[RMDB]
RNA sequence: GGGAACGACUCGAGUAGAGUCGAAAAGAUAUGGACAUAUCCUCUAGCGAUAAGACGCCAUCGGAAACGAUGGGCGUCUUUUGACGCUAUGAUAUGUCCUAAGUCAAAAGGUCCCUUCGGGGACCAAGAAAUCACUAAGCUUCGGCUUAGUGAUUUCAAAAGAAACAACAACAACAAC
Reactivity to DMS in 0.01 (KOAc 150mM, MgCl2 10mM, bicine 150mM(pH8.5), 24C), signal-to-noise 2, nucleotides 027 to 126: g000a020u010a300u000g000g000a010c000a010u000a000u010c020c010u040c000u000a000g010c010g010a210u020a020a010g010a020c010g030c000c000a060u000c000g000g000a160a080a150c000g020a020u000g010g010g030c000g020u000c000u020u000u000u020g020a300c160g000c010u000a000u010g000a050u000a000u010g010u000c010c000u000a010a100g000u000c020a120a110a160a110g000g000u000c000c000c000u000u000c250g010g020g010g000a010c010c000a010a060
This 177-nucleotide RNA was probed chemically with DMS. For DMS, 1,637 sequencing reads were counted. The RNA was probed in 150 mM KOAc, 10 mM MgCl2 and 150 mM bicine (pH 8.5) at 24 C. For DMS the reverse transcriptase was MarathonRT.